Background
Conditions: 150 mM KOAc, 10 mM MgCl2 and 150 mM bicine (pH 8.5), 24 C. Chemical mapping of a 207-nucleotide RNA with DMS and 2A3. For 2A3, 575 sequencing reads were counted. 2A3 is a SHAPE reagent: it acylates the 2'-hydroxyl of flexible nucleotides of all four kinds.

RNA sequence: GGGAACGACUCGAGUAGAGUCGAAAACUAUUUUCAGUAAUGGUAACUGCGAAACCGUUAUUUAUAGCAGAUAUAGGGAUAGGAGUAGGAAUGCCACGAAUGAAAAAAUACUUAAAAUGUAAUCUUAAUUCGAGUACACCACACGACAAUGAACAAAUCGUUUGACAAAUUUCGAUUUGUCAAACGAAAAAGAAACAACAACAACAAC
Reactivity to DMS in 0.01 (KOAc 150mM, MgCl2 10mM, bicine 150mM(pH8.5), 24C), signal-to-noise 1, nucleotides 027 to 156: c010u020a010u000u000u010u000c090a030g060u000a040a050u010g010g010u000a070a040c010u010g050c000g000a210a170a070c000c010g050u000u010a000u000u010u000a080u000a040g030c050a080g030a210u000a190u000a120g030g010g010a050u000a130g000g000a130g010u000a100g000g000a120a070u000g030c000c030a140c000g010a030a070u030g000a000a010a050a050a150a100u000a020c000u000u000a020a040a060a150u050g000u000a120a050u000c020u020u000a160a300u010u030c050g000a100g050u000a080c080a130c050c000a080c040a070c090g070a030c030a040a130u040g010a080a060c070a090a110a100
Reactivity to 2A3 in 0.01 (KOAc 150mM, MgCl2 10mM, bicine 150mM(pH8.5), 24C), signal-to-noise 1, nucleotides 027 to 156: c030u090a120u070u100u110u010c010a020g080u080a050a040u060g040g010u090a150a030c030u120g020c030g100a110a040a040c010c030g020u020u080a110u070u180u000a130u070a010g040c010a000g040a030u080a020u050a100g050g000g020a000u020a090g000g030a010g000u040a050g000g060a170a040u030g030c030c010a020c000g020a050a020u030g040a120a010a010a000a010a040u090a030c020u090u140a040a030a030a030u080g010u040a000a030u060c010u110u100a060a050u070u060c000g000a000g010u020a000c010a000c000c000a010c030a020c070g110a000c060a040a150u220g030a060a000c030a010a070a090